[RMDB]
RNA sequence: GGGAACGACUCGAGUAGAGUCGAAAAAAAAGAUAUGGAUUGUAAGAAGGAUGAACUACUGUCGGGCACUUUCGGAAACGAAAGUGUCUCUAGCGUGCAGCAUCCGGAUUACAAUCCUAAGUCAAAACCGUCUAUUGAAGUUCGCUUCAAUAGACGGAAAAGAAACAACAACAACAAC
Reactivity to DMS in 0.01 (KOAc 150mM, MgCl2 10mM, bicine 150mM(pH8.5), 24C), signal-to-noise 1, nucleotides 027 to 126: a000a080a140a100g000a070u000a300u020g000g000a000u010u000g000u000a000a020g020a300a120g000g000a010u000g020a070a140c020u000a110c020u000g020u000c080g000g000g000c010a000c000u000u000u010c000g020g020a060a090a180c000g050a010a000a000g040u000g000u000c000u010c020u000a060g050c200g010u000g050c040a020g000c010a010u000c000c000g000g000a300u000u000a010c020a000a000u010c000c000u000a010a020g000u000c010a090a130a030a130